[RMDB]
RNA sequence: GGGAACGACUCGAGUAGAGUCGAAAAUCAUUUUUUCACCAUUACUUCUUCCAUGUCCAAUAUGAUCAUGUGAGAAUACUAAAAUUCCUAACGAUGAUAUGUUUUCAGCUAGUUCGUCAUAACGUCCAGAAUGUUUACCAGCUCCAUGACUUAUGAAUCCAUGUAUGUUAUUCGUAACAUACAUGGAAAAAGAAACAACAACAACAAC
Reactivity to DMS in 0.01 (KOAc 150mM, MgCl2 10mM, bicine 150mM(pH8.5), 24C), signal-to-noise 4, nucleotides 027 to 156: u010c070a040u010u000u000u000u000u000c020a080c020c020a110u010u000a080c110u010u000c020u000u000c130c030a050u010g000u000c040c070a130a160u000a110u000g010a100u000c030a040u000g020u010g010a070g010a060a040u000a240c080u010a040a050a080a140u000u010c000c020u010a070a060c050g020a050u000g020a050u010a060u000g020u000u000u000u000c080a060g000c040u000a080g010u000u000c020g000u000c030a040u000a040a050c070g020u010c040c100a110g000a070a060u010g010u000u000u000a090c070c050a090g000c040u000c010c040a060u000g000a060c030u010u010a080u000g010a090a150
Reactivity to 2A3 in 0.01 (KOAc 150mM, MgCl2 10mM, bicine 150mM(pH8.5), 24C), signal-to-noise 5, nucleotides 027 to 156: u070c030a050u030u030u010u050u150u130c040a040c140c000a070u080u080a070c060u040u020c010u040u000c030c000a020u030g040u000c030c040a130a100u110a120u270g070a110u100c010a030u000g050u040g030a040g050a060a050u070a090c080u130a010a070a090a080u080u040c020c030u050a070a030c050g030a020u050g030a020u030a030u150g110u040u050u060u100c010a010g020c030u080a040g080u080u070c040g020u020c020a050u050a140a040c040g020u000c010c000a030g040a160a040u060g020u050u060u050a060c040c020a030g030c010u000c020c010a030u060g020a040c000u060u010a040u150g090a030a020
Structure probing data (DMS and 2A3) for a 207-nucleotide construct. For 2A3, 3,391 sequencing reads were counted. Conditions: 150 mM KOAc, 10 mM MgCl2 and 150 mM bicine (pH 8.5), 24 C. The DMS profile rests on 11,393 reads. 2A3 adducts were read by reverse transcription with SuperScript II with manganese.